[RMDB]
Record summary:
Chemical mapping of a 177-nucleotide RNA with DMS. It was measured as part of the RMDB library TTRINS. DMS adducts were read by reverse transcription with MarathonRT. Conditions: 150 mM KOAc, 10 mM MgCl2 and 150 mM bicine (pH 8.5), 24 C.
RNA sequence: GGGAACGACUCGAGUAGAGUCGAAAAGAUAUGGAAGACGGUGCCGAAUUCGUGAGUUCUAAGACAGCUUAUCGGAAACGAUAAGUCGAGAACUCUCGAAUAUAGACAGCACCGUCUUCCUAAGUCACGUAGCCUAAUACUUCGGUAUUAGGCUACGAAAAGAAACAACAACAACAAC
Reactivity to DMS in 0.01 (KOAc 150mM, MgCl2 10mM, bicine 150mM(pH8.5), 24C), signal-to-noise 2, nucleotides 027 to 126: g000a050u000a300u000g020g000a000a040g010a010c000g010g010u000g030c000c050g000a150a070u000u000c000g020u000g000a010g010u000u000c000u000a300a140g000a050c300a220g010c000u000u000a010u010c000g000g000a060a090a080c010g000a010u010a020a010g000u010c050g000a010g000a010a000c000u000c000u000c010g010a000a000u000a130u000a260g020a300c300a070g000c000a000c000c000g010u000c000u000u020c020c000u000a000a060g000u000c020a300